[RMDB]
RNA sequence: GGGAACGACUCGAGUAGAGUCGAAAAGAAGCAAAGCGCUGCCUAGGCAAGGAGGUGAGUCCUGGCGGCCACGAUAUGGAUGGCUAUACCACCGGAGGUGCACUCGGGCCUGUUGAGCGCCGGGUGCUACCCGGCGAUCGUUCGCGAUCGCCGGGUAAAAAGAAACAACAACAACAAC
Reactivity to 2A3 in 0.01 (KOAc 150mM, MgCl2 10mM, bicine 150mM(pH8.5), 24C), signal-to-noise 4, nucleotides 027 to 126: g110a070a020g050c070a080a050a030g050c090g000c060u030g000c000c040u090a030g030g020c040a080a140g060g050a030g010g150u120g050a060g050u040c000c020u010g020g010c000g030g000c040c010a040c030g050a050u030a080u270g120g010a060u030g060g000c050u060a020u050a190c010c030a010c010c010g000g070a040g010g070u040g000c000a000c010u010c010g000g000g020c030c030u110g040u100u090g030a060g020c060g030c000c000g000g000g010u000g000c000
Reactivity to DMS in 0.01 (KOAc 150mM, MgCl2 10mM, bicine 150mM(pH8.5), 24C), signal-to-noise 2, nucleotides 027 to 126: g020a120a050g000c070a040a100a100g020c150g050c050u000g010c010c020u020a050g000g010c050a100a070g020g000a040g020g030u010g010a070g020u000c060c040u000g020g000c090g020g020c000c010a060c080g000a110u020a050u030g000g000a090u030g010g020c050u010a130u040a150c010c070a070c050c030g020g000a080g000g000u030g000c000a000c000u000c000g000g000g000c010c020u030g000u010u020g020a100g020c030g010c010c010g000g000g020u010g010c030

This 177-nucleotide RNA was probed chemically with 2A3 and DMS. DMS adducts were read by reverse transcription with MarathonRT. The reactions ran in a buffer of 150 mM KOAc, 10 mM MgCl2 and 150 mM bicine (pH 8.5), at 24 C. Values cover nucleotides 27 to 126. For 2A3 the reverse transcriptase was SuperScript II with manganese. The DMS profile rests on 4,305 reads.